[RMDB]
RNA sequence: GGGAACGACUCGAGUAGAGUCGAAAAACGAUAACGAGGCGCUCACUAUUGCUGCGUAACUGACGGCCUGACGGUCUGACGUUACAAAGCUAAAGCGCGGUUGGACCCCACCGGGCAACAGAAGGGGAAAGGCGACCCCGUUUCGACGGGGUCGCAACAUACUGAUACAGUUCGCUGUAUCAGUAUGAAAAGAAACAACAACAACAAC
Reactivity to DMS in 0.01 (KOAc 150mM, MgCl2 10mM, bicine 150mM(pH8.5), 24C), signal-to-noise 2, nucleotides 027 to 156: a170c050g000a170u000a040a120c050g000a050g040g020c020g000c000u000c050a130c060u000a140u000u010g000c000u000g000c300g000u000a060a000c020u000g000a300c300g000g030c040c050u030g050a150c260g130g030u000c000u010g000a300c300g030u000u010a080c030a030a300a060g000c010u000a020a070a120g030c010g040c000g030g010u000u000g020g000a090c030c000c000c030a060c110c040g000g000g020c070a100a190c070a030g020a140a060g000g020g000g000a020a110a060g040g040c000g000a110c020c000c010c020g080u000u000u000c210g000a020c060g060g000g050g000u010c000g010c000a020a020
Reactivity to 2A3 in 0.01 (KOAc 150mM, MgCl2 10mM, bicine 150mM(pH8.5), 24C), signal-to-noise 2, nucleotides 027 to 156: a010c050g030a060u100a090a030c040g010a040g140g040c040g020c020u050c010a090c090u140a130u140u240g000c000u020g020c020g010u000a000a000c000u000g020a010c010g000g030c030c020u210g180a130c140g010g000u000c010u000g040a000c000g000u000u000a000c010a000a020a000g000c000u010a020a010a000g000c020g010c020g010g010u030u050g100g050a020c000c020c010c000a010c020c000g060g160g020c020a060a030c000a050g080a080a020g010g010g000g080a060a010a040g090g000c000g010a000c000c000c000c000g020u080u090u070c180g070a040c020g000g000g010g000u010c000g000c000a000a000
Structure probing data (DMS and 2A3) for a 207-nucleotide construct. For DMS the reverse transcriptase was MarathonRT. Values are in units of 0.01, from 0 to 300, in steps of 10.